[RMDB]
RNA sequence: GGGAACGACUCGAGUAGAGUCGAAAAAGAAAAGCGGAGGAGGGUUAUGGAUUGCGCUAAGUCCGCCCGCGCGUGGUGUGGGCUGGAAUUCGUGAAUGGAGGAUAAUUAAUGCCGCGCCCCCAAAAACAGUUAAUAGAUGUUCGCAUCUAUUAACUGAAAAGAAACAACAACAACAAC
Reactivity to 2A3 in 0.01 (KOAc 150mM, MgCl2 10mM, bicine 150mM(pH8.5), 24C), signal-to-noise 2, nucleotides 027 to 126: a000g070a030a010a000a010g020c040g060g020a020g020g040a050g000g030g040u040u110a030u120g070g000a050u070u150g030c020g000c040u040a100a000g020u000c010c010g000c000c000c000g000c000g000c020g090u110g080g060u050g000u010g040g000g000c090u170g040g000a010a050u080u030c010g000u050g050a090a040u080g020g040a050g050g000a020u030a070a050u180u070a090a030u110g050c000c000g010c000g030c020c000c020c000c020a060a090a010a000a000
Reactivity to DMS in 0.01 (KOAc 150mM, MgCl2 10mM, bicine 150mM(pH8.5), 24C), signal-to-noise 4, nucleotides 027 to 126: a110g010a070a070a100a120g010c080g010g000a060g010g010a100g000g000g010u000u000a060u010g010g010a080u000u000g010c060g020c130u000a040a070g010u000c010c010g000c010c000c010g000c040g010c090g050u000g010g030u000g040u000g000g000g000c000u010g020g010a030a030u000u000c080g020u000g000a060a070u000g000g010a100g010g000a100u010a050a090u010u010a050a110u010g020c020c020g020c030g000c020c000c010c010c030a040a050a050a080a090